Structure probing data (DMS and 2A3) for a 177-nucleotide construct. DMS adducts were read by reverse transcription with MarathonRT. Reactivities are given for positions 27 through 126. For 2A3 the reverse transcriptase was SuperScript II with manganese. Source: RMDB library OK2TST, as collected in RNAgym.
RNA sequence: GGGAACGACUCGAGUAGAGUCGAAAAUGCAACUGUAUUAGGUCACGUUCAACGUGGUGGCGCGCCUUGUGCCUUCGACCGUAUCUUAGCUUCUCGUAUGGGCGUAUAUGCCGUUGAGCUAUUACUCGCCGUUACUCCAGUUCGCUGGAGUAACGGCAAAAGAAACAACAACAACAAC
Reactivity to DMS in 0.01 (KOAc 150mM, MgCl2 10mM, bicine 150mM(pH8.5), 24C), signal-to-noise 1, nucleotides 027 to 126: u000g000c030a050a110c120u000g010u000a070u000u000a100g040g010u020c040a040c070g000u000u030c120a110a090c090g020u000g030g030u000g020g020c050g010c060g020c130c130u020u000g040u000g000c060c090u000u000c040g010a060c020c090g000u000a020u010c020u000u020a120g010c060u010u000c070u010c090g030u000a090u000g010g000g000c050g030u040a060u010a080u000g000c010c080g000u000u000g000a000g010c030u000a100u010u010a070c070u000c060
Reactivity to 2A3 in 0.01 (KOAc 150mM, MgCl2 10mM, bicine 150mM(pH8.5), 24C), signal-to-noise 2, nucleotides 027 to 126: u100g040c040a060a020c040u070g030u160a150u020u170a060g080g020u050c010a010c080g030u110u130c060a170a000c070g050u060g030g040u030g010g000c030g000c000g030c020c060u060u180g050u060g050c000c000u020u030c020g060a060c010c000g040u070a070u020c060u010u060a040g070c030u060u060c050u030c020g120u130a120u240g010g040g020c040g000u070a160u030a010u240g000c030c000g020u010u070g010a000g000c010u000a040u030u080a060c040u060c080